[RMDB]
RNA sequence: GGGAACGACUCGAGUAGAGUCGAAAAGUUGCCCGAGAAGAGAUCACACAGAUGAGACACAAGGAGCGAUGUCUCAUCACUUGGUUUUCGACAAGUGACGAGUCGUUCCCAAAAUCGGUCCAAUGAAUAUCCAAUUGAGUUUCGACUCAAUUGGAUAAAAAGAAACAACAACAACAAC
Reactivity to DMS in 0.01 (KOAc 150mM, MgCl2 10mM, bicine 150mM(pH8.5), 24C), signal-to-noise 3, nucleotides 027 to 126: g010u000u010g020c240c030c020g040a080g010a120a110g010a100g010a080u010c100a090c100a090c170a140g010a040u000g000a020g000a020c000a020c090a080a050g000g000a040g000c020g020a090u000g000u000c000u000c000a010u000c010a060c040u010u000g000g020u000u000u000u000c000g010a040c000a060a150g040u010g010a110c030g000a030g010u000c000g000u000u000c000c000c000a010a010a070a050u000c030g000g000u000c010c040a170a100u000g000a090a140